[RMDB]
RNA sequence: GGGAACGACUCGAGUAGAGUCGAAAAGGGACGCCUUUAGAAGAAGAGGCUAGGUGGUAUUCCGGUGUGGGAUACUUGGUAAUAUGUAACGCUAAUUGCAUAAGAUUGUAGUACGGAAUUUACAGUCAAAACGGUCCUGCGUUCGCGCAGGACCGAACAUAACCGUGUUGUUCGCAACACGGUUAUGAAAAGAAACAACAACAACAAC
Reactivity to 2A3 in 0.01 (KOAc 150mM, MgCl2 10mM, bicine 150mM(pH8.5), 24C), signal-to-noise 2, nucleotides 027 to 156: g050g000g020a020c080g030c030c020u100u060u070a140g040a270a010g030a040a010g020a030g010g000c030u030a010g060g000u040g020g020u040a060u080u020c040c040g010g080u200g030u150g030g010g010a020u020a060c000u030u080g040g010u070a060a040u040a080u120g050u050a040a030c050g000c140u070a080a070u080u060g020c030a020u020a110a100g000a010u020u020g020u010a020g030u020a040c080g040g030a040a020u090u030u050a040c010a010g010u040c030a020a080a040a070c020g000g000u000c000c000u000g000c000g000u040u070c190g000c000g000c100a000g000g000a000c000c000g000a000a000
Reactivity to DMS in 0.01 (KOAc 150mM, MgCl2 10mM, bicine 150mM(pH8.5), 24C), signal-to-noise 2, nucleotides 027 to 156: g000g000g010a130c130g040c000c010u000u000u000a100g010a140a210g000a190a090g000a030g000g030c010u000a060g010g100u000g010g020u000a070u000u000c010c000g030g110u020g040u010g050g010g000a040u010a010c020u000u000g010g020u020a110a160u000a080u000g000u000a080a080c120g010c100u010a070a120u000u000g020c040a090u000a130a180g000a010u000u000g020u000a020g020u010a300c040g020g040a060a300u020u000u020a030c010a070g020u000c020a010a020a130a070c000g080g020u000c000c000u000g020c030g020u000u020c300g010c030g040c010a000g010g000a020c040c010g000a000a040